RNA sequence: GGGAACGACUCGAGUAGAGUCGAAAAGCCCUUACGUUCGCGUAAGGGCAAAUAAAAAUAUAGUGUUCGUGGAUAUCACUUUAAUUAAGAUUCAUAAAUAAAAAACCCAUGUCUUCGGACAUGGGAAGAUAUGAUGACACUUCGGUGUCAUCAUAUCAAAAGAAACAACAACAACAAC
Reactivity to 2A3 in 0.01 (KOAc 150mM, MgCl2 10mM, bicine 150mM(pH8.5), 24C), signal-to-noise 1, nucleotides 027 to 126: g000c000c020c000u000u000a000c000g030u000u030c290g030c000g070u000a000a000g010g000g030c000a000a020a000u000a000a030a000a010a000u230a030u120a020g050u010g020u020u030c100g010u030g030g000a020u060a020u040c000a010c020u180u120u200a130a050u120u070a110a000g040a040u010u000c010a000u180a220a130a070u240a030a180a110a090a070a070c000c000c000a000u000g000u000c000u020u060c290g060g010a000c000a000u010g030g000g000a000a010
This 177-nucleotide RNA was probed chemically with 2A3. The reactions ran in a buffer of 150 mM KOAc, 10 mM MgCl2 and 150 mM bicine (pH 8.5), at 24 C.